[RMDB]
RNA sequence: GGGAACGACUCGAGUAGAGUCGAAAAGGAGGCAAGUUCGCUUGCCUCCAAAGAAGCUCAAAUUGACGCAAACAUCCGCCUCAUCGCGAGCAAGCGAGGAAAAAACCGUGAACUUCGGUUCACGGAAGUGAAGUUUAAACUUCGGUUUAAACUUCACAAAAGAAACAACAACAACAAC
Reactivity to 2A3 in 0.01 (KOAc 150mM, MgCl2 10mM, bicine 150mM(pH8.5), 24C), signal-to-noise 2, nucleotides 027 to 126: g000g000a010g000g020c020a010a000g030u040u060c080g020c090u000u000g020c000c000u020c010c000a000a000a010g000a010a000g040c010u010c020a090a300a300u180u190g040a050c020g000c050a000a300a170c040a160u070c040c020g040c070c000u030c030a120u060c050g020c020g020a030g090c020a020a020g020c010g000a050g150g000a060a090a060a000a020a040c000c000g020u000g000a000a010c000u020u050c190g040g000u010u000c000a000c000g000g010a030a000
Reactivity to DMS in 0.01 (KOAc 150mM, MgCl2 10mM, bicine 150mM(pH8.5), 24C), signal-to-noise 2, nucleotides 027 to 126: g000g000a020g030g010c010a010a000g020u000u020c270g050c000u000u010g000c000c010u010c000c000a000a020a040g000a100a110g010c010u000c000a040a140a090u000u010g010a040c050g020c050a080a120a070c140a080u010c120c040g000c020c030u000c070a080u000c080g010c090g000a070g010c130a070a100g020c060g000a060g020g000a010a050a040a070a110a060c000c000g020u000g000a000a000c000u000u010c190g010g000u010u000c000a000c000g000g000a010a060
Structure probing data (2A3 and DMS) for a 177-nucleotide construct. Conditions: 150 mM KOAc, 10 mM MgCl2 and 150 mM bicine (pH 8.5), 24 C. Reactivities are given for positions 27 through 126.